Background
This 177-nucleotide RNA was probed chemically with DMS.
RNA sequence: GGGAACGACUCGAGUAGAGUCGAAAACAACCACUGUCUACUACACCACCGUGGACGCGGCCUGGCGUCCGGACACAGUGUGGCGAUACCGACUAGGGUCCGGCGAAUCGUCGGAGCGGGUUUACCAACGUUUUUAUCCCUUCGGGGAUAAAAACGUAAAAGAAACAACAACAACAAC
Reactivity to DMS in 0.01 (KOAc 150mM, MgCl2 10mM, bicine 150mM(pH8.5), 24C), signal-to-noise 1, nucleotides 027 to 126: c140a130a090c050c050a130c040u010g010u000c020u000a100c120u000a080c050a060c030c020a050c040c090g000u000g010g000a050c000g020c110g030g010c060c080u000g010g000c080g020u000c010c000g030g000a090c060a060c060a000g000u020g000u000g000g000c100g000a120u000a090c290c150g000a020c030u000a120g020g010g030u020c000c000g000g020c060g010a070a090u010c000g000u000c030g030g010a080g010c040g010g040g000u000u000u000a160c020c010a180
Overview
Conditions: 150 mM KOAc, 10 mM MgCl2 and 150 mM bicine (pH 8.5), 24 C.